The data come from the RNA Mapping Database (RMDB), library OK2TST. Chemical mapping of a 177-nucleotide RNA with DMS and 2A3. Reactivities are rounded to 0.1 and cut off at 0 and 3. Reactivities are given for positions 27 through 126.
RNA sequence: GGGAACGACUCGAGUAGAGUCGAAAAGAUCGUUGUCCGUGGCGAACCUAAAGAAUGGGGACCGAUCCGAGGUGUGUCUACGCACAAGGUGAUGGUCAGUUCUGAUCCUAGUGACGGAACUGACAUGUGAUAAAAUUUAGUUCGCUAAAUUUUAUCAAAAAGAAACAACAACAACAAC
Reactivity to DMS in 0.01 (KOAc 150mM, MgCl2 10mM, bicine 150mM(pH8.5), 24C), signal-to-noise 9, nucleotides 027 to 126: g000a060u000c020g010u000u010g010u000c050c020g020u000g020g000c010g010a040a040c020c030u010a080a120a130g010a100a110u010g010g000g010g010a060c050c040g000a060u000c020c030g000a110g010g010u000g010u000g000u000c090u010a080c100g000c090a030c040a060a140g000g010u000g010a140u000g000g010u000c000a010g000u000u000c000u000g000a130u000c000c020u010a110g010u010g010a020c010g000g000a010a010c010u000g000a000c010a020u000g010
Reactivity to 2A3 in 0.01 (KOAc 150mM, MgCl2 10mM, bicine 150mM(pH8.5), 24C), signal-to-noise 5, nucleotides 027 to 126: g030a030u050c030g060u060u150g030u020c020c020g040u040g020g000c010g000a020a030c000c030u100a150a120a060g130a100a130u160g070g000g000g000a020c020c020g020a020u010c010c020g060a110g000g060u030g000u020g010u020c060u100a070c060g000c020a000c010a050a020g100g020u150g070a100u210g060g020u010c000a000g010u010u000c000u020g060a170u030c010c010u090a080g010u060g300a010c010g000g000a000a000c000u010g000a000c010a030u130g050